Structure probing data (2A3 and DMS) for a 177-nucleotide construct. It was measured as part of the RMDB library M2PK50. As a SHAPE reagent, 2A3 marks flexible, mostly unpaired nucleotides at the ribose 2'-OH. Reactivities are given for positions 27 through 126. 2A3 adducts were read by reverse transcription with SuperScript II with manganese. The RNA was probed in 150 mM KOAc, 10 mM MgCl2 and 150 mM bicine (pH 8.5) at 24 C.
RNA sequence: GGGAACGACUCGAGUAGAGUCGAAAAGUUUCAUCCUUCGGGAUGAAACAAAUAAAGUGACGCUCGCGCGUCACUGGCAUCGAGUAGGUCCAGCCGCCUACAAAAUCGACGGGUUCGCCCGUCGAAAGUACGCUGAUAGGUUCGCCUAUCAGCGUACAAAAGAAACAACAACAACAAC
Reactivity to 2A3 in 0.01 (KOAc 150mM, MgCl2 10mM, bicine 150mM(pH8.5), 24C), signal-to-noise 1, nucleotides 027 to 126: g000u040u020u000c000a000u010c000c000u020u040c180g130g000g000a000u020g000a000a020a010c000a000a000a030u100a000a120a000g010u000g000a000c000g010c010u010c120g160c100g000c020g150u000c000a000c000u000g000g050c030a170u120c060g050a050g060u010a000g000g010u030c060c110a000g000c020c020g020c000c000u010a020c000a000a080a020a120u050c000g000a000c010g000g000g060u090u060c230g090c000c010c020g000u000c000g000a000a000a000
Reactivity to DMS in 0.01 (KOAc 150mM, MgCl2 10mM, bicine 150mM(pH8.5), 24C), signal-to-noise 2, nucleotides 027 to 126: g000u000u010u010c000a010u010c000c000u000u000c190g020g030g000a020u010g000a000a010a000c000a040a070a100u010a060a070a000g020u000g000a000c010g020c000u010c300g020c300g000c000g030u000c000a000c010u000g010g000c220a120u010c160g000a100g010u000a000g000g000u010c010c070a170g010c030c140g010c000c000u000a010c030a100a090a080a080u000c040g010a020c010g010g020g010u000u010c300g030c010c000c010g040u000c000g000a000a020a060